RNA sequence: GGGAACGACUCGAGUAGAGUCGAAAACGAUAAGCAUUCGUGCUUAUCGACGGUACGAAAGUACAAAGGAGCAAAAGCAUCGGCUCCUAAAAACGUUGCAAAAGACAACGGGGUUCGCCCCGUUGAAAUGCUGUAGAGUAUUCGUACUCUACAGCAUAAAAGAAACAACAACAACAAC
Reactivity to 2A3 in 0.01 (KOAc 150mM, MgCl2 10mM, bicine 150mM(pH8.5), 24C), signal-to-noise 3, nucleotides 027 to 126: c010g000a000u000a000a000g000c000a010u020u140c210g090u060g000c010u000u000a000u010c000g020a010c030g080g000u000a000c010g050a130a050a040g010u010a020c030a050a230a050g000g010a020g010c020a030a070a170a040g010c010a080u090c060g120g000c010u010c010c000u060a020a000a010a010a000c030g030u030u040g000c030a040a050a050a080g090a080c000a000a000c000g020g000g020g010u040u040c150g130c000c000c020c000g000u000u000g000a010a000
Reactivity to DMS in 0.01 (KOAc 150mM, MgCl2 10mM, bicine 150mM(pH8.5), 24C), signal-to-noise 6, nucleotides 027 to 126: c010g010a010u010a000a000g010c000a030u000u010c210g020u000g010c000u000u000a010u000c010g010a080c200g020g010u000a000c000g000a130a060a170g010u000a000c010a090a140a160g000g000a000g010c000a110a070a100a140g010c050a030u000c050g010g000c000u000c000c000u010a010a020a020a020a040c050g010u000u000g010c010a070a060a110a130g010a200c010a010a000c000g010g000g010g020u000u010c230g010c010c000c010c000g020u000u000g000a030a100
The record gives the reactivity of an RNA of 177 nucleotides to 2A3 and DMS. The RNA was probed in 150 mM KOAc, 10 mM MgCl2 and 150 mM bicine (pH 8.5) at 24 C. 2A3 adducts were read by reverse transcription with SuperScript II with manganese. It was measured as part of the RMDB library M2PK50. Values are in units of 0.01, from 0 to 300, in steps of 10.